[RMDB]
RNA sequence: GGGAACGACUCGAGUAGAGUCGAAAACCUCGUUCGCGAGGCUUAAAUCCUAAGUCUGGACAUGCUCGCGAAGUAGGCAACAGCAUAUCGGAAACGAUAUGACAUGCCUAUCAAGCGAGCAACAGCCAGAUAUGGAUCCGGUCCGGUUCGCCGGAAAGCACUGUAGUUACUUCGGUAACUACAGUGCAAAAGAAACAACAACAACAAC
Reactivity to DMS in 0.01 (KOAc 150mM, MgCl2 10mM, bicine 150mM(pH8.5), 24C), signal-to-noise 1, nucleotides 027 to 156: c010c000u000c010g010u000u010c200g000c060g000a020g000g050c040u000u000a090a110a110u000c010c000u010a050a200g010u000c020u000g000g000a040c000a300u000g000c030u000c010g090c020g000a140a170g000u000a020g010g000c020a010a080c100a110g000c000a010u000a000u000c000g000g020a280a170a250c000g060a030u000a040u000g020a060c040a300u000g000c010c000u010a000u000c010a000a300g020c000g030a030g000c050a000a000c000a170g000c020c020a010g000a020u000a210u000g000g000a030u000c000c000g000g000u000c050c020g000g020u000u010c180g040c040c000g000g000a050a090a160
Reactivity to 2A3 in 0.01 (KOAc 150mM, MgCl2 10mM, bicine 150mM(pH8.5), 24C), signal-to-noise 3, nucleotides 027 to 156: c000c000u000c000g020u060u060c260g010c030g110a020g020g000c000u130u110a120a160a050u050c000c010u030a190a020g030u000c000u020g010g020a070c040a140u040g000c000u000c000g020c000g070a210a000g000u000a000g000g000c000a040a020c010a210g070c000a000u000a000u000c000g020g040a070a080a080c020g010a000u010a000u000g080a080c000a040u030g000c010c000u010a020u090c020a040a010g000c000g000a000g000c000a000a000c000a000g000c000c000a000g000a000u000a010u060g010g000a020u000c020c000g010g020u070c110c090g110g050u030u010c080g000c010c000g030g050a110a030a020
Source information:
Conditions: 150 mM KOAc, 10 mM MgCl2 and 150 mM bicine (pH 8.5), 24 C. The record gives the reactivity of an RNA of 207 nucleotides to DMS and 2A3. For 2A3 the reverse transcriptase was SuperScript II with manganese. For DMS the reverse transcriptase was MarathonRT. For 2A3, 4,083 sequencing reads were counted.